[RMDB]
RNA sequence: GGGAACGACUCGAGUAGAGUCGAAAAGCGCGGUGGCUCACACCUGUAAUCCCAGCAUUUUGGGAGGUCAAGGCAGACGGAUCACCUGAGGUCAGGAGUUCAAGGCCAGCCUGGCCAACAUGGUGAAGUAAGGAAUGCCAUUCGUGGCAUUCCUUACAAAAGAAACAACAACAACAAC
Reactivity to DMS in 0.01 (KOAc 150mM, MgCl2 10mM, bicine 150mM(pH8.5), 24C), signal-to-noise 1, nucleotides 027 to 126: g090c060g030c100g000g020u010g000g000c040u010c040a090c100a100c010c040u010g010u000a220a070u000c010c020c010a010g000c190a070u000u020u000u000g020g020g000a050g010g020u000c010a030a100g010g000c110a070g000a100c090g030g010a150u000c000a030c000c030u000g000a130g020g000u000c020a000g010g010a120g000u010u010c140a060a060g010g000c050c020a170g000c020c010u000g030g000c030c000a010a120c110a190u000g000g020u000g000a020a080
Reactivity to 2A3 in 0.01 (KOAc 150mM, MgCl2 10mM, bicine 150mM(pH8.5), 24C), signal-to-noise 1, nucleotides 027 to 126: g070c030g030c020g010g050u070g070g060c020u010c100a140c040a000c000c000u000g030u030a020a020u020c000c000c000a010g060c120a150u170u250u300u060g010g000g010a000g040g000u070c040a000a030g060g080c010a030g030a080c040g080g050a050u040c020a000c010c000u000g020a000g020g010u020c010a020g000g010a110g050u150u250c090a110a070g180g000c000c060a020g050c000c000u000g020g070c040c000a010a000c060a020u150g000g090u010g000a020a000